[RMDB]
Overview: Source: RMDB library M2PK50, as collected in RNAgym. Chemical mapping of a 177-nucleotide RNA with 2A3 and DMS. The DMS profile rests on 2,074 reads. The RNA was probed in 150 mM KOAc, 10 mM MgCl2 and 150 mM bicine (pH 8.5) at 24 C.
RNA sequence: GGGAACGACUCGAGUAGAGUCGAAAACGCGGAUACUUCGGUAUCCGCGAAAGAAGCGAACGCGUACCGAAAUAAAACGGUAAUAAAUCGCAAAACGCCUAAAAAGCCUAGACUUCGGUCUAGGCAACCAUAAAUUGGAGUUCGCUCCAAUUUAUGGAAAAGAAACAACAACAACAAC
Reactivity to 2A3 in 0.01 (KOAc 150mM, MgCl2 10mM, bicine 150mM(pH8.5), 24C), signal-to-noise 3, nucleotides 027 to 126: c020g020c000g000g010a000u000a000c000u010u040c140g040g000u000a000u010c000c010g020c010g010a010a000a000g030a050a010g000c010g000a050a010c070g010c070g040u010a000c010c000g090a120a120a000u300a020a150a030a010c000g020g020u000a000a010u030a040a150a010u100c040g000c010a020a050a040a060c070g010c010c010u100a150a120a070a050a010g000c000c000u000a000g010a000c010u030u040c300g060g000u010c010u000a000g000g000c000a000a000
Reactivity to DMS in 0.01 (KOAc 150mM, MgCl2 10mM, bicine 150mM(pH8.5), 24C), signal-to-noise 2, nucleotides 027 to 126: c030g020c010g020g000a000u000a000c000u000u020c130g020g040u010a010u000c000c010g060c000g000a020a050a040g010a190a090g010c000g000a040a040c150g000c110g050u000a010c010c000g010a090a090a160u020a070a090a090a110c000g000g000u000a030a060u020a050a100a050u040c000g030c000a040a040a100a100c110g000c010c000u010a010a060a090a120a060g030c000c010u010a000g000a020c000u000u000c160g030g000u000c010u000a000g000g020c000a000a000